Record summary
This 207-nucleotide RNA was probed chemically with 2A3 and DMS. Reactivities are given for positions 27 through 156. The data come from the RNA Mapping Database (RMDB), library OK3TST. Conditions: 150 mM KOAc, 10 mM MgCl2 and 150 mM bicine (pH 8.5), 24 C. DMS adducts were read by reverse transcription with MarathonRT.

[RMDB]
RNA sequence: GGGAACGACUCGAGUAGAGUCGAAAACGCCACGGUCGAGGACGCCGAAGCCCUGUACGCCACCCAGGUGGUCACCGAGGCCGAAGCCGACGCCGGCACGUGGCGAGGCGAGUGGAUCGGCGAGCAGCCCACCGACGGCCUGUUCACUGUCGAGCGCUCCAAGCAACCUAUUCGUAGGUUGCUUGGAAAAAGAAACAACAACAACAAC
Reactivity to 2A3 in 0.01 (KOAc 150mM, MgCl2 10mM, bicine 150mM(pH8.5), 24C), signal-to-noise 2, nucleotides 027 to 156: c010g050c000c000a010c000g000g030u000c000g010a010g040g000a010c010g000c000c020g010a010a010g020c010c000c000u030g000u070a020c050g010c000c000a020c000c020c030a170g010g170u030g050g000u080c050a050c080c000g070a270g000g000c000c000g010a010a000g000c000c000g070a040c070g110c200c050g020g020c060a150c250g000u010g010g010c000g000a000g020g020c040g010a010g040u080g040g060a140u040c020g000g030c010g010a000g050c000a020g010c010c010c010a070c070c170g110a240c060g040g010c020c030u010g000u040u070c110a070c100u100g020u000c020g020a040g070c050g000c030
Reactivity to DMS in 0.01 (KOAc 150mM, MgCl2 10mM, bicine 150mM(pH8.5), 24C), signal-to-noise 1, nucleotides 027 to 156: c090g010c000c020a000c000g080g020u000c020g020a090g020g000a300c070g020c000c050g000a300a170g020c010c000c050u040g070u000a120c110g000c010c010a040c010c010c160a300g020g010u000g000g010u000c190a090c300c050g000a090g000g000c000c050g000a190a090g000c020c000g000a300c100g020c050c000g000g070c000a090c100g070u000g000g010c090g020a020g000g000c060g000a090g010u000g010g020a100u010c120g050g010c000g010a070g010c020a090g010c020c010c070a170c000c090g000a140c020g000g000c030c030u000g030u010u010c040a050c010u000g000u000c000g000a080g030c020g000c120